[RMDB]
The record gives the reactivity of an RNA of 177 nucleotides to DMS and 2A3. For DMS, 6,278 sequencing reads were counted. For DMS the reverse transcriptase was MarathonRT. The 2A3 profile rests on 9,758 reads. Source: RMDB library TTRDEL, as collected in RNAgym.
RNA sequence: GGGAACGACUCGAGUAGAGUCGAAAAGAUAUGGAAUGCUGCUCGGUCAACAGCUCGGAAACGAGACAUGACCAGCACAUGCAUUCCUAAGUCGGUACCCACGGAAUCCUUCGGGAUUCCGUGGGAAUCCUUAAUCCUAGUUCGCUAGGAUUAAGGAAAAAGAAACAACAACAACAAC
Reactivity to DMS in 0.01 (KOAc 150mM, MgCl2 10mM, bicine 150mM(pH8.5), 24C), signal-to-noise 5, nucleotides 027 to 126: g010a040u000a300u010g000g010a030a000u000g020c000u010g020c010u000c220g040g000u000c000a030a070c290a170g010c000u000c000g000g000a080a060a180c000g000a000g010a040c090a170u000g010a010c000c000a020g000c000a080c300a080u010g010c010a010u000u010c000c000u000a020a080g000u010c020g000g010u010a110c010c000c000a000c020g010g010a020a000u000c010c000u000u010c220g020g010g000a000u010u000c000c000g030u000g000g000g000a010a010
Reactivity to 2A3 in 0.01 (KOAc 150mM, MgCl2 10mM, bicine 150mM(pH8.5), 24C), signal-to-noise 5, nucleotides 027 to 126: g000a010u070a020u150g010g010a020a000u000g000c010u020g000c020u100c300g010g000u000c010a040a060c070a230g030c000u000c010g030g020a100a080a040c020g000a010g050a060c040a140u110g000a000c000c010a000g090c010a010c040a050u190g000c000a000u000u030c000c000u010a150a020g070u020c040g030g150u100a110c010c000c010a000c000g020g020a010a010u020c020c020u250u300c300g050g000g000a000u020u000c010c000g010u000g000g000g000a000a030